[RMDB]
RNA sequence: GGGAACGACUCGAGUAGAGUCGAAAAGAUAUGGAUCUGGGCAGAACGAUAAGCUGCGGUUCGGAAACGAACCCAGCUUUUGACGUUCUGCCAGAUCCUAAGUCAAAGCAUGCGUUCGCGCAUGCAACACGUACUCAAACUUCGGUUUGAGUACGUGAAAAGAAACAACAACAACAAC
Reactivity to 2A3 in 0.01 (KOAc 150mM, MgCl2 10mM, bicine 150mM(pH8.5), 24C), signal-to-noise 1, nucleotides 027 to 126: g030a000u040a070u140g010g000a010u000c030u090g030g260g210c010a000g010a010a010c040g030a090u040a170a030g000c000u010g030c070g140g000u000u000c000g020g000a070a050a040c010g000a010a000c000c000c000a000g000c020u000u000u020u030g030a000c010g000u000u010c000u010g000c010c010a000g010a000u010c000c000u010a020a000g000u000c030a090a010a070g030c010a020u020g000c020g030u000u170c300g040c010g000c160a000u000g000c010a000a010
Reactivity to DMS in 0.01 (KOAc 150mM, MgCl2 10mM, bicine 150mM(pH8.5), 24C), signal-to-noise 3, nucleotides 027 to 126: g010a050u010a300u000g010g000a020u010c000u000g010g020g020c010a010g010a000a010c000g020a150u000a050a030g000c000u000g050c300g030g000u000u000c000g000g010a090a150a210c000g010a000a000c000c000c000a000g020c000u000u000u000u000g020a240c110g000u000u000c000u000g010c000c010a000g010a000u000c000c010u010a010a060g000u000c040a130a140a130g000c000a000u000g010c000g010u000u020c270g000c020g010c000a000u000g020c000a100a110